[RMDB]
RNA sequence: GGGAACGACUCGAGUAGAGUCGAAAAUAGGGAAAAUAUGUUGGCUAAGCAAACUGCCCAGACAGAUCAACCUCAGUUGUUGACAGCCACCAAGUUCUGAAUUCAUGUGGACUCUUCUUAGAGGAACAUUCGAGAAGCUAUUCGUAGCUUCUCGAAUAAAAGAAACAACAACAACAAC
Reactivity to DMS in 0.01 (KOAc 150mM, MgCl2 10mM, bicine 150mM(pH8.5), 24C), signal-to-noise 2, nucleotides 027 to 126: u010a200g000g000g010a040a080a110a080u000a050u000g000u000u010g010g000c040u010a080a130g000c080a030a050a100c070u000g000c010c020c030a090g000a080c160a080g000a080u000c040a050a100c030c030u000c130a120g000u010u000g000u010u000g000a060c120a070g030c050c000a010c040c060a050a090g000u000u030c040u000g000a080a080u010u010c090a060u010g010u010g010g010a150c020u010c060u000u020c080u000u000a100g000a040g000g000a100a030c110